[RMDB]
RNA sequence: GGGAACGACUCGAGUAGAGUCGAAAAGCGCGCGACCCCGACAGCUUCGAACGGGACGGUCGACUGUCGAACCUCGAGCGAAACCUCGAGAUCGCCGCCGACAUCGGCGAGUGGUUCGGCGAGGCCGACCCAGCCUAUGUUUCGACAUAGGCUGGGUAAAAGAAACAACAACAACAAC
Reactivity to 2A3 in 0.01 (KOAc 150mM, MgCl2 10mM, bicine 150mM(pH8.5), 24C), signal-to-noise 3, nucleotides 027 to 126: g000c040g000c020g000c020g100a120c010c000c000c010g000a040c040a020g020c050u160u130c140g050a130a030c020g010g030g110a030c010g000g020u040c010g010a150c090u160g000u020c000g000a010a010c010c000u010c000g000a000g000c110g040a110a040a050c000c000u000c010g000a010g010a040u060c010g000c010c000g000c020c050g120a120c050a150u220c030g020g000c000g010a050g030u070g010g010u020u020c010g000g010c000g010a030g000g000c000c000g020
Reactivity to DMS in 0.01 (KOAc 150mM, MgCl2 10mM, bicine 150mM(pH8.5), 24C), signal-to-noise 4, nucleotides 027 to 126: g020c060g030c020g030c030g010a160c060c020c030c020g020a090c080a050g010c090u000u000c080g020a060a080c090g010g000g010a300c040g020g000u000c010g020a100c050u020g050u010c000g020a020a040c040c000u000c010g010a020g010c050g010a060a110a140c300c000u000c010g000a070g010a090u010c030g020c010c000g060c080c020g010a120c290a140u010c040g000g010c010g000a020g000u000g010g000u000u000c020g030g020c010g000a160g010g000c030c010g010
Conditions: 150 mM KOAc, 10 mM MgCl2 and 150 mM bicine (pH 8.5), 24 C. The record gives the reactivity of an RNA of 177 nucleotides to 2A3 and DMS. For DMS, 2,975 sequencing reads were counted. For 2A3 the reverse transcriptase was SuperScript II with manganese. The 2A3 profile rests on 4,119 reads. It was measured as part of the RMDB library OK2TRN.